[RMDB]
RNA sequence: GGGAACGACUCGAGUAGAGUCGAAAAGAUAUGGAUGGUGGACCGUACCAGCGACGAUCUACACGUAACAUCGGAUCGGAAACGAUCCGUGGUGUAGGGAGCUGAAGAAGGUCCACCAUCCUAAGUCCUAUCGAAGUGUGUUCGCACACUUCGAUAGAAAAGAAACAACAACAACAAC
Reactivity to DMS in 0.01 (KOAc 150mM, MgCl2 10mM, bicine 150mM(pH8.5), 24C), signal-to-noise 1, nucleotides 027 to 126: g020a090u000a100u000g000g000a020u030g000g030u000g020g010a040c000c000g010u000a300c270c010a010g000c000g000a060c300g030a040u000c000u000a000c010a020c000g020u000a030a050c200a020u010c010g000g000a010u000c000g000g000a090a020a190c020g000a010u000c000c010g040u000g000g010u000g000u000a000g000g000g000a030g020c010u000g010a090a090g030a130a190g000g010u000c000c020a000c000c010a000u010c000c000u000a010a100g000u020c020